Source: RMDB library OK1LIB, as collected in RNAgym. This 177-nucleotide RNA was probed chemically with DMS and 2A3. For 2A3 the reverse transcriptase was SuperScript II with manganese. The reactions ran in a buffer of 150 mM KOAc, 10 mM MgCl2 and 150 mM bicine (pH 8.5), at 24 C. The 2A3 profile rests on 13,323 reads.
RNA sequence: GGGAACGACUCGAGUAGAGUCGAAAACCCGGGUUCGAUUCCCGGCAGCUCCACCGAAGGGCCAGGUCAGUGGCCCAUUUGCAGACUGCGACAGCCAUCACAGACCAAGGUAUCGUGCCACGGAAAAGUCAUCUGUCUCGUUCGCGGGACAGAUGGCAAAAGAAACAACAACAACAAC
Reactivity to DMS in 0.01 (KOAc 150mM, MgCl2 10mM, bicine 150mM(pH8.5), 24C), signal-to-noise 4, nucleotides 027 to 126: c040c000c010g000g000g010u010u010c020g000a200u010u000c000c010c020g010g030c070a060g000c040u010c030c030a070c120c040g010a090a090g000g000g000c010c020a040g010g010u030c160a080g020u010g020g000c000c010c010a020u010u010u000g010c070a060g020a110c050u000g000c030g000a070c090a080g010c030c030a070u010c040a070c080a080g000a100c030c010a070a070g010g000u000a040u010c030g010u020g000c040c030a050c070g000g010a070a060a020a080
Reactivity to 2A3 in 0.01 (KOAc 150mM, MgCl2 10mM, bicine 150mM(pH8.5), 24C), signal-to-noise 3, nucleotides 027 to 126: c000c000c000g000g000g000u030u050c020g010a140u030u030c000c000c000g010g000c010a010g000c010u000c010c010a040c000c000g030a050a030g000g000g000c000c000a020g000g090u120c020a020g050u010g010g000c000c000c000a000u010u000u010g000c010a000g010a040c010u010g000c010g030a020c010a020g000c010c010a030u030c010a030c010a020g020a010c010c010a030a020g020g000u020a020u040c030g020u030g010c000c000a030c020g030g000a010a030a010a010